[RMDB]
RNA sequence: GGGAACGACUCGAGUAGAGUCGAAAAGGUCCGCCGAUCGGCUCGGGGCGUGGACUGUUGUCGGCCGUGCCGGCGGCCUAAGCCCGGGGGCCCUAGGUGCCUCCGGUCGCCGUCGUCGGCACGGCCGCCUCUCUUGAUGUUUCGACAUCAAGAGAGGAAAAGAAACAACAACAACAAC
Reactivity to DMS in 0.01 (KOAc 150mM, MgCl2 10mM, bicine 150mM(pH8.5), 24C), signal-to-noise 2, nucleotides 027 to 126: g010g000u000c010c020g000c040c010g000a080u030c100g010g000c090u010c050g020g010g010g010c060g010u020g000g010a050c070u020g010u000u000g020u020c000g000g020c000c000g030u000g000c000c000g000g000c000g010g000c000c050u010a090a240g000c050c000c000g020g010g000g010g020c000c030c210u060a170g020g030u010g040c000c000u010c010c000g000g010u010c020g030c180c300g000u000c000g010u000c000g000g000c000a000c010g000g000c000c010g020

Chemical mapping of a 177-nucleotide RNA with DMS. Conditions: 150 mM KOAc, 10 mM MgCl2 and 150 mM bicine (pH 8.5), 24 C. The data come from the RNA Mapping Database (RMDB), library RFM100.